Structure probing data (2A3 and DMS) for a 177-nucleotide construct. The DMS profile rests on 1,191 reads. For 2A3 the reverse transcriptase was SuperScript II with manganese. For 2A3, 1,133 sequencing reads were counted. DMS adducts were read by reverse transcription with MarathonRT.
RNA sequence: GGGAACGACUCGAGUAGAGUCGAAAACGACGUUCGGUUUCGCCAAUCGCUUUCGCCAUUGAUGGAGUGCUCCUAUCGCCGUAGAGAAUCGCUUUACCGUUAACGUUACGUGCCGCACGACCAAUGGAGGUCAAACUCAGUUCGCUGAGUUUGACCUAAAAGAAACAACAACAACAAC
Reactivity to 2A3 in 0.01 (KOAc 150mM, MgCl2 10mM, bicine 150mM(pH8.5), 24C), signal-to-noise 1, nucleotides 027 to 126: c020g030a000c050g060u080u110c030g000g060u020u060u090c040g000c000c030a040a080u090c050g020c000u010u120u070c000g020c020c010a020u020u090g010a040u110g030g060a040g040u080g050c020u000c040c010u050a090u090c020g000c050c060g000u070a020g000a000g010a170a110u100c010g000c030u070u040u050a050c020c000g000u020u070a050a030c030g020u050u050a020c000g050u040g050c010c010g060c000a030c060g030a070c000c030a050a100u080g240g010
Reactivity to DMS in 0.01 (KOAc 150mM, MgCl2 10mM, bicine 150mM(pH8.5), 24C), signal-to-noise 2, nucleotides 027 to 126: c080g020a090c030g010u010u010c070g040g010u000u000u000c070g000c070c090a090a130u000c040g000c010u000u000u000c040g000c040c050a110u010u000g000a090u010g020g000a180g020u010g000c040u000c020c010u010a070u000c020g020c110c040g020u010a040g020a170g000a050a100u000c140g020c030u010u000u000a090c050c050g020u000u000a070a070c080g020u000u000a070c100g030u010g000c030c060g010c000a070c000g010a070c040c060a040a150u010g040g010